[RMDB]
RNA sequence: GGGAACGACUCGAGUAGAGUCGAAAACUGCAAAGCAACGUCUUCGUGCUGCGCGCAGGUCUGCUGCGUGCAAGAAGGUGAGGGCCAAGCGUGCUCUUGCCGAGUUUGAGGCAAUCGUUCAAAGUGACUCUCCGGAGAAUUUCGAUUCUCCGGAGAGAAAAGAAACAACAACAACAAC
Reactivity to DMS in 0.01 (KOAc 150mM, MgCl2 10mM, bicine 150mM(pH8.5), 24C), signal-to-noise 2, nucleotides 027 to 126: c010u000g000c170a080a130a080g030c050a010a030c100g000u000c030u030u010c050g010u000g000c080u000g020c040g040c030g010c030a000g010g010u000c140u020g000c030u010g000c040g010u000g010c030a020a080g000a200a140g040g010u010g020a020g010g000g020c000c050a260a100g000c250g020u000g010c010u000c010u000u000g010c000c000g000a060g000u000u020u010g000a060g010g000c070a010a080u010c080g000u000u000c050a030a050a060g010u000g020a270
Reactivity to 2A3 in 0.01 (KOAc 150mM, MgCl2 10mM, bicine 150mM(pH8.5), 24C), signal-to-noise 2, nucleotides 027 to 126: c050u080g050c050a130a070a020g000c020a030a050c050g000u000c000u090u060c020g030u050g060c040u030g020c010g030c000g000c010a010g000g040u220c180u300g170c010u000g010c070g010u000g000c000a020a050g050a060a030g010g010u010g000a000g020g000g000c000c020a150a120g220c070g060u200g000c020u000c000u000u000g000c010c000g030a040g050u110u140u110g030a030g040g000c000a070a110u140c020g020u050u030c040a100a080a070g050u090g070a060
Record summary: Chemical mapping of a 177-nucleotide RNA with DMS and 2A3. The data come from the RNA Mapping Database (RMDB), library OK2TRN. The 2A3 profile rests on 1,486 reads. High 2A3 reactivity points to a flexible backbone, as in loops and unpaired stretches. The reactions ran in a buffer of 150 mM KOAc, 10 mM MgCl2 and 150 mM bicine (pH 8.5), at 24 C.